[RMDB]
RNA sequence: GGGAACGACUCGAGUAGAGUCGAAAACCCGUUGUCCUUCGGGACAACGGGAAAAUGCUUGCAUACUGCUUUGGCCAGGACCAAAACGUAUGCGAAGUGAAAAUGCUGAUCUCUUCGGAGAUCAGCAGACUCAUAGAAGGUUCGCCUUCUAUGAGUCAAAAGAAACAACAACAACAAC
Reactivity to DMS in 0.01 (KOAc 150mM, MgCl2 10mM, bicine 150mM(pH8.5), 24C), signal-to-noise 3, nucleotides 027 to 126: c010c000c000g020u000u000g000u010c000c000u000u040c220g020g010g020a000c000a010a010c000g010g000g010a000a000a060a080u000g000c010u000u000g020c000a000u010a010c000u010g020c060u000u000u000g000g020c000c120a210g020g000a210c010c000a010a000a000a020c010g000u000a000u000g000c000g010a000a010g020u010g000a060a070a060a190u000g000c000u000g000a020u000c000u000c000u000u020c210g040g000a010g010a000u000c000a000g010c000a010
Reactivity to 2A3 in 0.01 (KOAc 150mM, MgCl2 10mM, bicine 150mM(pH8.5), 24C), signal-to-noise 5, nucleotides 027 to 126: c000c000c000g000u000u000g000u010c010c000u020u070c270g070g000g000a000c000a000a000c000g000g000g050a070a040a000a020u120g000c010u010u020g000c000a000u000a020c030u150g050c020u010u000u010g040g000c070c210a300g090g120a270c030c000a020a010a000a000c010g000u010a010u010g010c030g000a010a000g010u060g050a110a080a010a040u100g000c000u000g000a000u000c010u000c000u030u090c210g090g000a000g000a000u000c000a000g000c000a000

Record summary:
The record gives the reactivity of an RNA of 177 nucleotides to DMS and 2A3. DMS adducts were read by reverse transcription with MarathonRT. For 2A3, 9,294 sequencing reads were counted. Values are in units of 0.01, from 0 to 300, in steps of 10. Source: RMDB library RFMREP, as collected in RNAgym. The RNA was probed in 150 mM KOAc, 10 mM MgCl2 and 150 mM bicine (pH 8.5) at 24 C.